[RMDB]
RNA sequence: GGGAACGACUCGAGUAGAGUCGAAAAGAAAGAAAGAAAGCUGACCCUUCUGCUGACGGAUCUUGUGGAGCACCACAGUGCAGAAGGGUAGAGAAGCUUUAAUGCCGACCGUCUGGGCAGCCUUGAAAAAACGGAUUCUUCUUCGGAAGAAUCCGAAGCUUUACAUAGUCUUCGGACUAUGUAAAGCAAAAGAAACAACAACAACAAC
Reactivity to 2A3 in 0.01 (KOAc 150mM, MgCl2 10mM, bicine 150mM(pH8.5), 24C), signal-to-noise 1, nucleotides 027 to 156: g040a010a020a020g110a030a060a040g040a020a040a000g000c060u090g070a030c000c010c000u020u010c000u010g000c010u020g040a030c020g060g030a090u100c100u180u030g000u030g010g030a120g180c070a130c030c000a010c000a040g080u070g070c020a010g010a000a000g000g010g010u020a020g000a000g010a100a000g000c030u060u080u000a080a030u050g050c040c000g060a070c010c000g030u050c030u040g000g000g000c030a000g000c000c050u120u060g080a090a040a000a020a020a020c010g000g000a000u000u000c000u000u000c010u040u020c050g050g000a000a000g000a010a010u000c000c000g000a000a000
Reactivity to DMS in 0.01 (KOAc 150mM, MgCl2 10mM, bicine 150mM(pH8.5), 24C), signal-to-noise 1, nucleotides 027 to 156: g010a200a080a100g020a090a100a080g000a140a060a010g000c010u000g000a110c010c020c000u010u000c000u000g080c010u000g050a160c080g040g030a090u010c040u020u030g000u000g040g000a260g060c170a070c000c010a110c000a090g000u040g010c000a040g000a000a000g000g000g020u000a000g020a090g010a100a030g000c020u000u000u000a080a090u000g030c000c030g000a050c020c010g020u030c060u000g030g000g040c020a040g000c000c050u000u000g000a020a110a070a150a080a170c010g000g000a010u000u000c000u000u010c020u000u010c300g020g010a030a020g000a000a010u010c000c000g020a000a030

Source: RMDB library M2RFPK, as collected in RNAgym.
This 207-nucleotide RNA was probed chemically with 2A3 and DMS.
The reactions ran in a buffer of 150 mM KOAc, 10 mM MgCl2 and 150 mM bicine (pH 8.5), at 24 C.
The 2A3 profile rests on 971 reads.